RNA sequence: GGGAACGACUCGAGUAGAGUCGAAAAUUGUAACUUGCCGAGAACCUCGAGGAAGCGUCUGCCUUCUAGGCGGUUUUGAGCGGAGAAGAGGGAAGAGAGGCUGCAUGAAGAAGAAGAAGAGUCGCAGAGGUGUGGAGUAACCCAUUGGCAUAUGAAAAUACCAAAAUAGUUUCGACUAUUUUGGUAUAAAAGAAACAACAACAACAAC
Reactivity to 2A3 in 0.01 (KOAc 150mM, MgCl2 10mM, bicine 150mM(pH8.5), 24C), signal-to-noise 2, nucleotides 027 to 156: u050u010g000u020a100a020c040u050u130g010c000c000g050a050g030a180a020c010c020u030c030g040a060g050g040a070a030g000c010g080u060c070u060g060c030c010u120u030c060u150a040g020g000c000g000g000u060u100u060u100g070a030g010c000g000g020a050g000a080a000g020a030g000g000g050a020a010g030a010g010a020g030g000c020u030g000c040a030u090g030a040a080g030a030a000g010a010a020g020a010a030g050a010g030u090c060g000c080a010g020a040g060g020u040g010u060g070g000a040g000u010a020a020c010c010c010a050u020u090g030g030c030a050u080a060u300g100a040a060a050
Reactivity to DMS in 0.01 (KOAc 150mM, MgCl2 10mM, bicine 150mM(pH8.5), 24C), signal-to-noise 2, nucleotides 027 to 156: u000u000g000u000a060a110c040u010u000g030c030c010g000a130g010a080a060c040c010u000c060g010a090g010g010a080a100g000c070g010u000c070u030g020c050c000u000u000c060u000a080g030g040c020g060g030u020u010u000u000g010a060g050c050g010g020a190g020a060a130g020a130g020g020g010a070a100g010a090g010a060g000g050c010u000g010c080a070u000g010a080a090g010a060a100g020a040a100g010a100a100g010a050g020u010c080g040c050a090g010a060g000g020u010g020u020g030g010a130g020u010a050a140c010c010c020a300u000u000g030g000c020a110u000a070u000g000a090a060a080